Notes:
An RNA of 207 nucleotides, treated with 2A3 and DMS and read out base by base. For DMS, 3,194 sequencing reads were counted.

[RMDB]
RNA sequence: GGGAACGACUCGAGUAGAGUCGAAAACUUUCUCCUCCCCCAUGGUCCAUGUGCGCUGUAAUGCAUAGCGAUCUGAGGGAGUUGGAAUGGAGUCUGAACUGCAGAACAUAUACAGGACGUAUAGUACAGCUCCUUUAUUUUAUUUUUUUGGGGGGGAGCUAGUGAUGAUAUUCGUAUCAUCACUAGCAAAAGAAACAACAACAACAAC
Reactivity to 2A3 in 0.01 (KOAc 150mM, MgCl2 10mM, bicine 150mM(pH8.5), 24C), signal-to-noise 2, nucleotides 027 to 156: c040u080u160u060c000u000c000c000u010c050c000c000c000c000a000u040g020g000u060c080c040a130u250g020u080g000c080g020c160u230g190u300a150a030u130g030c010a010u000a000g000c030g020a010u030c030u020g000a020g000g000g000a000g000u010u060g030g020a050a020u110g010g050a060g020u050c000u050g060a140a170c050u150g050c120a130g060a290a040c050a070u220a060u100a090c120a060g130g060a010c010g020u040a050u120a120g040u070a030c010a000g000c020u000c000c000u000u070u000a030u000u090u030u020a060u060u040u000u030u000u080u080g000g000g000g000g020g010g000a000
Reactivity to DMS in 0.01 (KOAc 150mM, MgCl2 10mM, bicine 150mM(pH8.5), 24C), signal-to-noise 2, nucleotides 027 to 156: c090u010u000u000c000u000c100c080u010c010c000c000c020c020a060u000g040g000u010c010c050a160u000g030u000g000c050g000c110u000g020u000a110a100u010g000c030a030u000a080g040c120g010a020u000c020u000g030a050g000g030g020a120g000u000u000g010g000a160a080u010g030g000a300g030u010c040u000g010a180a210c050u010g000c030a130g000a040a200c090a120u000a110u000a190c040a140g000g030a210c060g010u000a060u000a090g010u010a060c000a040g020c000u000c010c040u000u000u000a050u000u000u000u000a060u010u000u000u000u170u000u040g020g000g000g020g050g080g040a090